[RMDB]
RNA sequence: GGGAACGACUCGAGUAGAGUCGAAAAGUGGCGGGAGACGAGACGCAGAGAAAGGAGAAGGCAUCAUACGUAAUCCGCUGUGAAAGGACCGCCACGGAGGGAGCGGCAUAUCACGGCCUGCGCCACACAUGCGCGGCUAUUUCGAUAGCCGCGCAUGAAAAGAAACAACAACAACAAC
Reactivity to DMS in 0.01 (KOAc 150mM, MgCl2 10mM, bicine 150mM(pH8.5), 24C), signal-to-noise 3, nucleotides 027 to 126: g060u010g000g010c010g070g030g000a090g010a050c040g000a260g020a300c050g000c000a040g020a100g000a110a110a130g000g010a010g030a080a150g000g040c140a060u100c280a290u170a090c060g000u000a090a210u000c000c000g020c000u000g020u020g010a090a190a190g020g000a050c000c000g010c010c000a020c000g050g000a180g000g010g000a060g040c010g000g000c000a060u020a040u090c160a080c200g000g000c000c000u050g060c010g080c020c050a110c120a300
Reactivity to 2A3 in 0.01 (KOAc 150mM, MgCl2 10mM, bicine 150mM(pH8.5), 24C), signal-to-noise 2, nucleotides 027 to 126: g010u000g000g010c000g000g030g000a200g080a130c100g080a040g000a140c030g080c060a000g000a000g040a140a090a020g090g030a030g020a190a040g060g000c020a140u030c050a060u130a120c110g020u060a100a040u010c010c000g020c030u090g000u010g030a070a010a020g040g000a040c020c020g000c000c000a000c000g000g010a090g010g040g000a060g010c000g000g000c040a100u110a000u070c040a010c090g050g010c000c020u060g020c030g000c000c010a070c000a010
The record gives the reactivity of an RNA of 177 nucleotides to DMS and 2A3. Conditions: 150 mM KOAc, 10 mM MgCl2 and 150 mM bicine (pH 8.5), 24 C. Values cover nucleotides 27 to 126.